[RMDB]
Background: This 207-nucleotide RNA was probed chemically with 2A3 and DMS. 2A3 is a SHAPE reagent: it acylates the 2'-hydroxyl of flexible nucleotides of all four kinds. It was measured as part of the RMDB library RSTRND. The reactions ran in a buffer of 150 mM KOAc, 10 mM MgCl2 and 150 mM bicine (pH 8.5), at 24 C. The DMS profile rests on 3,139 reads.
RNA sequence: GGGAACGACUCGAGUAGAGUCGAAAAAAGCGUACCGAGGUUCCUACAGGCCUCGUUAAACAGGUAGGAAAACAAUACUCGCAAACGACUACGAGUACGCAUUAGCCGCUUAGUCGGCUAACGUUCUUUCUGAUUUUUCCUGUCGGAUCAGAGGGGGGUAUUCAGACAAGUUCGCUUGUCUGAAUACAAAAGAAACAACAACAACAAC
Reactivity to 2A3 in 0.01 (KOAc 150mM, MgCl2 10mM, bicine 150mM(pH8.5), 24C), signal-to-noise 4, nucleotides 027 to 156: a010a000g080c050g020u040a070c040c000g000a000g010g000u030u070c010c000u020a020c020a010g110g050c000c000u020c020g070u010u010a010a000a010c010a000g030g000u010a000g000g000a030a060a040a020c090a050a050u120a080c030u040c050g060c070a050a060a150c030g040a030c030u200a040c140g010a010g030u020a020c020g030c020a050u010u010a000g000c010c000g000c090u160u180a060g110u300c000g000g020c000u000a010a000c010g020u050u030c010u030u150u000c010u000g030a020u000u010u020u050u030c000c030u010g030u050c020g010g000a000u010c000a000g010a010g000g000g010g000g000
Reactivity to DMS in 0.01 (KOAc 150mM, MgCl2 10mM, bicine 150mM(pH8.5), 24C), signal-to-noise 2, nucleotides 027 to 156: a040a110g030c070g060u010a080c130c040g010a040g020g050u000u000c030c020u000a100c140a180g040g000c000c010u000c000g020u010u000a030a050a000c050a050g020g020u020a070g040g000a090a040a080a080c090a080a050u000a010c000u010c010g000c040a080a110a160c240g000a190c010u000a040c000g020a030g030u000a000c040g000c080a070u000u000a010g030c000c000g000c020u010u000a180g030u000c000g020g000c000u000a000a010c050g000u000u000c040u000u000u000c020u010g010a130u000u000u000u020u000c030c000u000g010u010c030g010g000a080u010c040a070g020a090g000g000g000g030g040